This 177-nucleotide RNA was probed chemically with DMS and 2A3. The 2A3 profile rests on 1,393 reads. High DMS reactivity at an A or C suggests that its Watson-Crick edge is free. For DMS the reverse transcriptase was MarathonRT. Source: RMDB library OK2TST, as collected in RNAgym. 2A3 adducts were read by reverse transcription with SuperScript II with manganese. The DMS profile rests on 2,809 reads.

[RMDB]
RNA sequence: GGGAACGACUCGAGUAGAGUCGAAAACUAUGGUGUCCUGUGCUAAUGUUGUAGUAUUGGCUGGGCAUUUCUCCAUCUCUACUUUUAGUGAAAUUUUUGAAGUUUCAAUAUUCGGCAGGAACUGGUACGACGAGUAAAAUUUCGAUUUUACUCGUCGAAAAGAAACAACAACAACAAC
Reactivity to DMS in 0.01 (KOAc 150mM, MgCl2 10mM, bicine 150mM(pH8.5), 24C), signal-to-noise 2, nucleotides 027 to 126: c100u000a060u020g010g020u000g000u010c010c010u000g030u010g020c020u010a030a030u000g010u000u020g010u010a130g030u010a040u000u010g000g030c060u000g000g010g020c100a050u000u010u010c050u000c020c020a050u000c050u000c020u000a050c040u000u010u000u010a030g030u000g000a030a040a040u000u000u010u020u000g000a070a100g000u000u000u000c030a050a060u010a100u000u000c110g010g020c020a040g020g020a110a050c120u000g000g000u020a120
Reactivity to 2A3 in 0.01 (KOAc 150mM, MgCl2 10mM, bicine 150mM(pH8.5), 24C), signal-to-noise 2, nucleotides 027 to 126: c040u060a140u280g100g000u040g060u080c000c030u080g040u100g050c010u000a030a030u020g080u190u140g150u150a110g030u040a030u050u030g050g000c020u010g040g020g000c020a010u040u120u000c030u000c000c020a050u030c030u000c010u070a120c030u080u050u060u090a060g040u080g050a040a090a140u060u190u080u120u200g150a180a030g040u000u000u070c030a030a010u060a070u080u070c030g030g000c020a000g060g000a050a040c040u030g000g090u060a010